[RMDB]
Structure probing data (DMS and 2A3) for a 207-nucleotide construct. Conditions: 150 mM KOAc, 10 mM MgCl2 and 150 mM bicine (pH 8.5), 24 C. The data come from the RNA Mapping Database (RMDB), library OK3TST. DMS adducts were read by reverse transcription with MarathonRT.

RNA sequence: GGGAACGACUCGAGUAGAGUCGAAAAGUGUCCACUCAACAGUCAAGAUUUGCGAGAUGCAAUCCUCAACCAUACUAGUGUGCUCUAGGAUCAACAAGACAGAUAUUUGGAGAUGCAUUGAUUUACACAUAAGAAAAACAUUUAAUAAAAGAAGAGAGCCUAAUUAAAUGUUCGCAUUUAAUUAGGCAAAAGAAACAACAACAACAAC
Reactivity to DMS in 0.01 (KOAc 150mM, MgCl2 10mM, bicine 150mM(pH8.5), 24C), signal-to-noise 2, nucleotides 027 to 156: g000u010g000u000c020c040a040c020u010c070a070a120c080a130g020u000c060a120a080g000a090u020u000u000g040c060g010a180g010a190u000g050c040a070a040u000c070c010u020c060a060a060c060c040a060u010a100c040u000a090g010u010g010u010g010c070u010c020u000a050g020g000a100u000c020a070a130c020a010a070g010a110c030a070g010a050u000a020u000u000u010g000g000a070g030a090u010g000c070a080u000u010g010a210u010u000u000a070c010a010c040a050u020a050a200g000a060a040a100a080a070c020a080u010u000u000a040a080u010a010a080a110a170g000a100a070g010a210g020a130
Reactivity to 2A3 in 0.01 (KOAc 150mM, MgCl2 10mM, bicine 150mM(pH8.5), 24C), signal-to-noise 3, nucleotides 027 to 156: g090u050g060u000c000c000a020c050u080c020a040a150c030a040g070u070c040a090a050g020a140u040u080u140g070c020g070a080g010a130u080g070c010a030a030u020c020c000u050c030a020a080c040c010a030u050a090c020u040a040g060u050g020u050g070c020u040c010u030a010g040g010a060u060c040a030a130c040a070a000g050a020c030a040g110a040u050a040u060u010u050g020g010a040g020a020u030g000c010a030u020u040g010a050u060u070u210a040c040a000c010a020u140a100a080g070a050a070a020a030a000c010a050u100u180u090a120a220u200a060a120a030a020g050a100a020g060a010g020a020